Structure probing data (DMS and 2A3) for a 177-nucleotide construct. For DMS the reverse transcriptase was MarathonRT. For 2A3, 1,191 sequencing reads were counted. The data come from the RNA Mapping Database (RMDB), library OK2TST. The DMS profile rests on 1,044 reads. Conditions: 150 mM KOAc, 10 mM MgCl2 and 150 mM bicine (pH 8.5), 24 C.

RNA sequence: GGGAACGACUCGAGUAGAGUCGAAAAUUAAGGUCCUGGGAGAAGCAGGUGUCCACGAUAAACACAUCCUGUCUCUGAUGGUCAGCCUAUAAACCACUCUUCUGACUUGCCAGCAAAUCAUGGGUGAAGGAUCUUAACCAUUCGUGGUUAAGAUCCUAAAAGAAACAACAACAACAAC
Reactivity to DMS in 0.01 (KOAc 150mM, MgCl2 10mM, bicine 150mM(pH8.5), 24C), signal-to-noise 2, nucleotides 027 to 126: u000u000a100a070g020g010u000c020c000u000g000g020g030a060g000a130a090g030c020a060g020g000u000g000u000c070c020a100c190g000a090u000a070a140a100c220a090c070a050u000c000c000u000g010u010c030u000c030u000g000a060u000g000g020u000c040a150g000c080c030u000a040u020a050a100a140c040c030a040c050u000c040u000u000c060u000g020a030c070u000u000g010c060c090a130g000c070a050a050a070u000c060a040u010g020g000g020u000g010a080
Reactivity to 2A3 in 0.01 (KOAc 150mM, MgCl2 10mM, bicine 150mM(pH8.5), 24C), signal-to-noise 2, nucleotides 027 to 126: u090u010a070a040g050g030u070c000c020u020g000g020g000a040g000a160a040g070c000a020g000g000u000g040u050c040c120a100c110g070a050u220a110a130a000c050a010c000a080u120c020c030u060g010u000c010u000c030u000g120a120u140g030g020u040c030a010g040c000c050u060a090u120a090a080a010c040c000a040c000u030c010u130u000c020u010g060a110c020u000u020g030c020c020a040g080c040a050a000a100u030c010a100u060g030g000g060u060g060a030